Structure probing data (DMS) for a 177-nucleotide construct.

RNA sequence: GGGAACGACUCGAGUAGAGUCGAAAAGAUAUGGACCCUAGUAGCUGAGCGAUAAGCUACCCCCUUGGUAAUCGGAAACGAUUACCAAGGGGGAUAGCUUUUGACGCUCCGAAAGGGUCCUAAGUCACGAGUUCAAUUAGUUCGCUAAUUGAACUCGAAAAGAAACAACAACAACAAC
Reactivity to DMS in 0.01 (KOAc 150mM, MgCl2 10mM, bicine 150mM(pH8.5), 24C), signal-to-noise 1, nucleotides 027 to 126: g000a030u030a300u020g010g000a030c010c000c000u000a060g030u010a250g020c300u010g010a000g030c010g040a230u000a040a030g020c000u000a000c000c000c000c030c000u000u020g000g000u010a000a000u000c000g000g000a150a080a130c030g020a010u000u000a000c000c010a010a000g000g000g000g010g000a010u000a000g010c010u000u000u000u010g030a290c030g000c000u010c000c010g000a160a240a190g000g000g040u000c000c000u000a000a060g010u000c040a300